[RMDB]
RNA sequence: GGGAACGACUCGAGUAGAGUCGAAAAAGUAUAAAGUAUUAGCAGGGAUUGAUUGUGUUUUAUAUUUACUAUCAGAUGAUGGUGCAUCAAUGGUAUAGCUAUACUUGUACGUCAUUGACACGCACUAGCCGUAAUUUAAUUUCGAUUAAAUUACGGCAAAAGAAACAACAACAACAAC
Reactivity to DMS in 0.01 (KOAc 150mM, MgCl2 10mM, bicine 150mM(pH8.5), 24C), signal-to-noise 5, nucleotides 027 to 126: a130g010u000a030u010a050a030a050g010u000a020u010u000a020g020c010a090g010g020g000a080u010u000g010a050u020u010g010u000g000u010u000u000u010a100u010a070u010u010u000a050c030u010a030u000c030a180g000a130u010g000a040u000g010g020u000g000c050a060u000c010a010a010u000g020g020u010a110u000a100g020c030u000a040u000a030c040u000u000g010u000a010c060g000u000c100a100u010u000g010a070c130a060c170g010c090a070c130u000a120
Reactivity to 2A3 in 0.01 (KOAc 150mM, MgCl2 10mM, bicine 150mM(pH8.5), 24C), signal-to-noise 3, nucleotides 027 to 126: a000g060u060a050u100a050a070a000g020u020a020u190u140a030g010c020a030g080g050g110a010u020u040g040a020u060u070g030u020g030u120u090u120u020a130u010a010u040u150u060a020c030u020a020u040c030a040g040a300u150g000a030u080g130g030u000g000c010a020u030c050a010a000u010g070g000u130a050u100a140g000c020u040a030u010a120c030u040u010g000u010a010c020g010u000c020a050u020u120g040a050c050a000c160g040c020a020c070u050a040